[RMDB]
RNA sequence: GGGAACGACUCGAGUAGAGUCGAAAAACUAGGAGCGCACAUCUCUCUAAGACUGUACGACAGUCUGUCUCUCUAGCACGCUUGUUCAACGAGAGAGAGAGAGCGUUCGAACAAGUGUGCAACGAAACUCACAAGAAUAUUUCGAUAUUCUUGUGAGAAAAGAAACAACAACAACAAC
Reactivity to 2A3 in 0.01 (KOAc 150mM, MgCl2 10mM, bicine 150mM(pH8.5), 24C), signal-to-noise 9, nucleotides 027 to 126: a010c080u080a050g040g030a030g030c040g040c050a030c020a210u060c020u000c000u000c010u040a050a030g010a010c010u030g090u160a060c090g080a040c110a010g000u000c010u030g030u000c090u000c000u000c040u050a030g000c000a000c000g000c010u010u010g000u010u010c000a010a010c020g010a010g010a010g000a010g000a010g000a000g010a190g030c000g000u010u020c100g000a000a000c000a000a000g000u000g000u000g000c000a000a010c030g030a040a010a020
Reactivity to DMS in 0.01 (KOAc 150mM, MgCl2 10mM, bicine 150mM(pH8.5), 24C), signal-to-noise 9, nucleotides 027 to 126: a110c120u000a090g010g010a060g000c060g020c080a090c120a130u010c020u010c010u000c030u000a100a070g010a020c010u000g010u010a070c140g010a300c300a010g000u000c000u000g010u000c040u000c010u000c050u000a220g010c010a010c010g010c020u000u000g000u000u000c000a020a040c050g010a070g000a110g000a080g000a070g000a060g000a090g010c010g000u000u000c110g010a010a010c010a010a010g010u000g010u000g000c000a050a040c180g000a060a080a120